[RMDB]
RNA sequence: GGGAACGACUCGAGUAGAGUCGAAAAAAUAGAAGAUAUGGAGAAGCAUCGAUCUAAGGUAACGCGAAACUUCGCUCGGAAACGAGCGAAGGAGUUAUCUUAGGGAGCUUCUCCUAAGUCAUAGUAACGUUUACGUAAGGUUCGCCUUACGUAAACGAAAAGAAACAACAACAACAAC
Reactivity to 2A3 in 0.01 (KOAc 150mM, MgCl2 10mM, bicine 150mM(pH8.5), 24C), signal-to-noise 2, nucleotides 027 to 126: a000a050u300a030g120a200a010g010a010u070a080u300g010g000a000g000a000a030g000c020a140u300c100g070a040u000c050u030a010a000g020g010u010a000a000c030g060c140g190a140a080a060c020u000u010c010g000c010u000c010g030g020a070a200a150c010g000a020g000c010g000a000a000g000g040a000g000u010u000a010u010c000u010u000a000g000g040g010a010g000c000u010u010c000u000c000c000u020a020a000g010u000c010a020u130a220g220u090a090a090
Reactivity to DMS in 0.01 (KOAc 150mM, MgCl2 10mM, bicine 150mM(pH8.5), 24C), signal-to-noise 2, nucleotides 027 to 126: a090a110u010a080g010a170a100g000a010u030a300u010g000g000a020g010a020a000g020c000a300u000c180g000a060u010c000u000a000a000g000g010u000a000a000c010g000c160g000a170a070a270c000u000u000c000g050c020u000c000g000g030a120a060a170c010g020a010g030c000g030a000a000g000g000a120g000u000u000a000u000c000u000u010a000g020g010g010a010g010c000u000u000c000u010c000c020u000a000a070g000u010c090a100u010a060g000u020a110a180
This 177-nucleotide RNA was probed chemically with 2A3 and DMS. Conditions: 150 mM KOAc, 10 mM MgCl2 and 150 mM bicine (pH 8.5), 24 C. For DMS the reverse transcriptase was MarathonRT. The 2A3 profile rests on 2,256 reads.